[RMDB]
RNA sequence: GGGAACGACUCGAGUAGAGUCGAAAAAUGAGGCAGAACAUCCUAGAUGAUCCAGGUGGGCCUUAAAUGUAAUCACAGGUAGUAUCCUUUUAAGAGAGAGACAAAAGAUUUGACUACAGGAGAAGGCAAUGUGAUGAUGGAAGCAGAAACUGGAGUACAGGAUAGCAUUAUUCGUAAUGCUAUCCUGAAAAGAAACAACAACAACAAC
Reactivity to DMS in 0.01 (KOAc 150mM, MgCl2 10mM, bicine 150mM(pH8.5), 24C), signal-to-noise 6, nucleotides 027 to 156: a070u000g010a070g030g030c010a100g000a090a110c050a090u000c020c040u000a100g020a140u010g000a150u010c030c030a100g020g030u000g000g010g000c040c020u000u000a030a100a120u000g000u010a060a060u000c040a050c080a080g030g030u000a100g020u000a090u010c010c010u000u000u000u000a070a170g010a120g000a100g000a120g020a100c050a040a080a080a080g000a150u000u000u000g010a080c010u020a060c050a070g010g010a120g020a070a050g010g030c040a050a060u010g020u010g010a070u000g000a080u000g010g010a060a080g020c040a060g000a040a040a060c050u000g010g010a070g040u000a170
Reactivity to 2A3 in 0.01 (KOAc 150mM, MgCl2 10mM, bicine 150mM(pH8.5), 24C), signal-to-noise 9, nucleotides 027 to 156: a000u120g010a030g030g010c030a030g010a100a030c020a080u060c010c020u050a070g010a130u120g020a020u060c040c030a020g050g000u030g030g030g010c000c000u040u020a060a130a050u140g050u110a040a030u070c040a030c020a080g060g000u030a020g020u030a130u100c030c000u040u060u060u210a140a020g060a010g020a000g000a000g020a040c050a030a100a020a020g070a050u090u090u180g060a050c030u050a020c040a030g020g030a050g040a070a030g030g000c020a030a070u080g020u040g030a040u030g000a010u050g030g020a030a020g010c030a020g050a050a040a010c030u040g010g050a020g040u110a020